[RMDB]
RNA sequence: GGGAACGACUCGAGUAGAGUCGAAAAGAUAUGGACGAAAGAUCGAUAAGCUGACAGUCGGAAACGACUGCAGCUUUUGACGAUCUAAGUCCUAAGUCAAACUCACCGUCGUUCGCGACGGUGAGAACACUACAAGACGGUUCGCCGUCUUGUAGUGAAAAGAAACAACAACAACAAC
Reactivity to DMS in 0.01 (KOAc 150mM, MgCl2 10mM, bicine 150mM(pH8.5), 24C), signal-to-noise 4, nucleotides 027 to 126: g000a010u000a100u000g010g010a010c000g000a150a080a030g000a010u000c000g030a160u010a010a020g020c000u000g000a130c000a000g000u000c000g020g000a010a020a060c010g010a000c000u000g000c010a000g000c000u000u000u000u000g020a160c040g000a010u000c000u010a020a300g000u000c000c000u000a010a100g000u000c020a100a100a160c000u000c000a010c000c010g010u000c000g030u010u010c220g020c010g010a010c010g010g000u010g000a000g010a030a070
Reactivity to 2A3 in 0.01 (KOAc 150mM, MgCl2 10mM, bicine 150mM(pH8.5), 24C), signal-to-noise 3, nucleotides 027 to 126: g010a000u030a040u080g000g010a010c010g010a080a060a090g010a000u010c020g050a130u070a300a000g000c010u000g140a300c020a010g010u020c000g010g000a040a020a010c000g010a010c020u010g010c010a000g000c010u020u010u000u020g010a010c000g000a000u000c010u010a010a010g010u030c000c000u000a010a000g010u000c040a030a090a160c010u000c000a000c000c000g000u010c000g010u050u080c270g000c020g170a000c000g000g000u000g000a000g000a000a000
Conditions: 150 mM KOAc, 10 mM MgCl2 and 150 mM bicine (pH 8.5), 24 C. The record gives the reactivity of an RNA of 177 nucleotides to DMS and 2A3. High 2A3 reactivity points to a flexible backbone, as in loops and unpaired stretches. DMS adducts were read by reverse transcription with MarathonRT. For 2A3, 7,830 sequencing reads were counted. 2A3 adducts were read by reverse transcription with SuperScript II with manganese.